The data come from the RNA Mapping Database (RMDB), library M2PK90. The record gives the reactivity of an RNA of 177 nucleotides to 2A3 and DMS. The reactions ran in a buffer of 150 mM KOAc, 10 mM MgCl2 and 150 mM bicine (pH 8.5), at 24 C. For 2A3, 1,316 sequencing reads were counted. The DMS profile rests on 1,538 reads. Values cover nucleotides 27 to 126.

RNA sequence: GGGAACGACUCGAGUAGAGUCGAAAAUAACUCCUCCCGCGAGAGCCGCUAAGGUGGAAACGCUAUGCGGUACUGGCUGAUAGGGUGCUUGCGAGUGCCGCGGGAGGUCUCGUAGAAAAUAACCUAAUUACUUGGCAAUAUUCGUAUUGCCAAGUAAAAAAGAAACAACAACAACAAC
Reactivity to 2A3 in 0.01 (KOAc 150mM, MgCl2 10mM, bicine 150mM(pH8.5), 24C), signal-to-noise 1, nucleotides 027 to 126: u060a030a030c000u020c030c000u000c000c000c000g020c000g000a110g000a030g110c010c000g000c050u030a160a070g050g000u000g010g030a050a050a000c010g000c010u030a020u110g030c000g000g020u040a030c030u060g140g000c030u060g050a090u150a060g100g010g190u060g020c030u070u110g030c010g030a020g010u030g040c000c000g010c030g000g010g000a000g010g000u000c000u000c010g000u040a020g170a070a110a050a080u150a070a080c020c010u080a120a100
Reactivity to DMS in 0.01 (KOAc 150mM, MgCl2 10mM, bicine 150mM(pH8.5), 24C), signal-to-noise 3, nucleotides 027 to 126: u020a110a150c080u010c000c000u000c000c020c000g020c000g000a110g020a300g000c000c000g020c030u020a090a110g010g020u000g000g000a060a070a110c020g010c010u000a300u000g010c010g000g000u000a050c040u000g030g000c030u020g000a180u000a140g010g010g000u000g000c030u000u000g020c030g020a030g020u000g010c060c020g010c010g000g000g000a040g010g020u020c020u000c020g000u010a160g000a050a100a080a120u010a180a090c030c040u010a060a110